[RMDB]
RNA sequence: GGGAACGACUCGAGUAGAGUCGAAAACAGGUCGAUAGUACCAAUAACCCUGGUACCAAUAAGGUACUAUCGACCAUUUAGCUCUUCUUCUACAACACGCUCGCUGAAGAAGAGCUUUUCAGGUACCAGGGAAGCGAGCGUAAGGCCGAGAGGCCGACCACUACGGGUGAUUCGUCACCCGUAGUGGAAAAGAAACAACAACAACAAC
Reactivity to 2A3 in 0.01 (KOAc 150mM, MgCl2 10mM, bicine 150mM(pH8.5), 24C), signal-to-noise 1, nucleotides 027 to 156: c000a000g000g000u010c000g000a010u000a010g010u000a000c000c010a060a060u300a080a120c010c000c000u020g000g000u000a040c010c030a050a180u180a260a160g000g000u000a000c000u000a000u000c000g000a000c000c000a000u020u020u050a000g010c000u020c010u020u010c000u010u000c020u080a010c060a260a020c030a030c060g000c000u000c010g000c000u010g000a000a000g000a000a000g000a000g010c000u010u000u010u040c000a000g000g000u000a000c000c000a000g000g000g000a000a000g000c000g000a000g030c010g010u000a120a090g000g010c000c000g050a040g000a050g070g010c010c000g000a000